[RMDB]
An RNA of 177 nucleotides, treated with 2A3 and DMS and read out base by base. For 2A3, 4,204 sequencing reads were counted. For DMS the reverse transcriptase was MarathonRT. Values cover nucleotides 27 to 126. For DMS, 10,119 sequencing reads were counted.

RNA sequence: GGGAACGACUCGAGUAGAGUCGAAAACAGUUACGUCCGCAAAUAAUUUUAGCAGGGGGCUUAGACGCCACUAACGUCGCAGCGGCGAUCGGGGCGCUGCGUCCUUUUGCAGUUGAUGUCAGUGGCGCCUUGAUAGAAAAUUCGUUUUCUAUCAAGGAAAAGAAACAACAACAACAAC
Reactivity to 2A3 in 0.01 (KOAc 150mM, MgCl2 10mM, bicine 150mM(pH8.5), 24C), signal-to-noise 3, nucleotides 027 to 126: c030a020g020u080u120a050c050g090u050c010c020g020c030a020a110a070u130a080a100u170u180u180u300a100g000c050a080g050g000g000g000g050c010u040u040a040g030a080c030g010c000c000a020c040u020a030a020c020g020u000c020g000c060a040g010c010g120g020c000g020a040u100c060g000g050g020g060c030g020c060u050g010c010g030u010c020c000u070u210u090u120g020c040a030g020u210u220g080a080u070g060u050c020a010g000u010g010g000c010g010
Reactivity to DMS in 0.01 (KOAc 150mM, MgCl2 10mM, bicine 150mM(pH8.5), 24C), signal-to-noise 6, nucleotides 027 to 126: c070a120g000u010u000a080c110g010u010c010c020g010c060a070a070a080u010a120a100u010u010u010u000a090g020c050a070g020g000g000g010g010c220u000u000a060g020a240c020g000c000c000a020c010u010a050a040c050g020u000c010g010c090a070g010c040g010g010c020g010a060u010c170g010g010g010g010c010g010c070u000g000c060g010u000c030c020u000u000u000u010g020c040a080g010u000u010g000a040u000g010u000c050a030g020u000g000g010c010g010